[RMDB]
RNA sequence: GGGAACGACUCGAGUAGAGUCGAAAACUUCUUUCUCUUCCCUUUCCUCUGCCCUCAGUUCAUCUUGUCUUUCUGUGAGCAAUUUUACCAGGUACUGUGCUUGGCUUGGGGAAGAGGCCAGGAUACAUCGGCCCCCAGAAUUCGUUCUGGGGGCCGAAAAAGAAACAACAACAACAAC
Reactivity to 2A3 in 0.01 (KOAc 150mM, MgCl2 10mM, bicine 150mM(pH8.5), 24C), signal-to-noise 1, nucleotides 027 to 126: c030u030u110c040u000u060u080c010u010c000u010u000c030c000c000u000u000u000c050c020u030c060u050g090c030c000c010u100c030a000g000u010u050c000a090u050c130u030u050g100u030c080u040u060u000c120u210g170u170g050a040g020c120a100a170u060u050u100u110a000c000c000a000g020g030u010a050c020u060g050u040g150c030u030u150g000g000c000u030u030g060g000g000g000a000a030g000a000g000g000c000c060a020g040g000a080u080a080c010a040